Structure probing data (DMS and 2A3) for a 177-nucleotide construct. The reactions ran in a buffer of 150 mM KOAc, 10 mM MgCl2 and 150 mM bicine (pH 8.5), at 24 C. For 2A3, 1,453 sequencing reads were counted. The DMS profile rests on 1,581 reads.
RNA sequence: GGGAACGACUCGAGUAGAGUCGAAAACGACAACAGCGCGCAUAGCUUCGAGUUGGCGCUCCUUGUCCUGCUCAGUGAUAACCCACGACAUGACCUCUUCGCCAUUGCCGCGCACCAGGGCCGAUACACUGAAUUUCGGAUUCGUCCGAAAUUCAGUAAAAGAAACAACAACAACAAC
Reactivity to DMS in 0.01 (KOAc 150mM, MgCl2 10mM, bicine 150mM(pH8.5), 24C), signal-to-noise 2, nucleotides 027 to 126: c090g000a050c020a060a050c200a060g030c120g000c080g050c080a080u010a060g010c040u000u020c110g030a070g010u010u020g000g020c030g020c020u010c050c030u000u010g010u000c010c060u010g010c060u000c030a040g020u000g000a090u010a110a110c050c020c010a090c050g010a040c050a050u000g000a120c020c040u000c090u000u000c080g030c000c040a050u000u000g000c030c030g010c080g000c040a020c050c040a070g010g030g000c010c010g010a070u000a070c140
Reactivity to 2A3 in 0.01 (KOAc 150mM, MgCl2 10mM, bicine 150mM(pH8.5), 24C), signal-to-noise 1, nucleotides 027 to 126: c040g040a010c000a010a060c010a070g010c010g000c010g020c080a110u080a120g020c020u120u090c080g090a110g000u100u090g030g000c060g000c000u020c000c010u020u080g030u030c030c050u050g050c000u030c000a020g000u010g060a090u080a130a080c030c000c000a020c060g020a010c000a050u060g040a060c000c040u110c000u070u070c040g030c010c000a040u000u080g030c030c040g050c000g000c040a010c040c000a030g000g000g060c000c010g000a020u020a090c050
Annotation
It was measured as part of the RMDB library OK2TST. 2A3 adducts were read by reverse transcription with SuperScript II with manganese.